[RMDB]
RNA sequence: GGGAACGACUCGAGUAGAGUCGAAAAUAACACACUUUCAUAUAAGGAAGUACAAACUGAUCUCUUCCACUGGCCUGAAUAGUAUAUGAUUAAUUCUCCAGACAGAGUGCACUAUGGCCCAACUGUCCUAUUUAAUGUGAUUUAAUUCUCUUGGAGACUGAUAGUAGCCUUUCGAGGCUACUAUCAGAAAAGAAACAACAACAACAAC
Reactivity to 2A3 in 0.01 (KOAc 150mM, MgCl2 10mM, bicine 150mM(pH8.5), 24C), signal-to-noise 1, nucleotides 027 to 156: u160a050a040c050a020c000a000c010u020u030u040c040a020u100a060u140a140a300g000g000a020a090g020u250a110c120a080a190a020c060u140g040a110u040c020u000c000u050u000c020c000a130c050u070g000g000c000c000u000g020a040a030u080a180g100u110a050u070a110u300g050a040u130u000a170a060u060u020c000u000c040c040a020g000a020c000a000g050a040g000u090g060c010a000c070u080a090u060g060g060c000c020c000a000a090c020u040g040u130c000c010u090a200u140u090u280a120a060u130g040u030g050a110u070u000u140a090a090u150u080c000u010c000u040u040g040g000a000g000a020
Structure probing data (2A3) for a 207-nucleotide construct. The reactions ran in a buffer of 150 mM KOAc, 10 mM MgCl2 and 150 mM bicine (pH 8.5), at 24 C.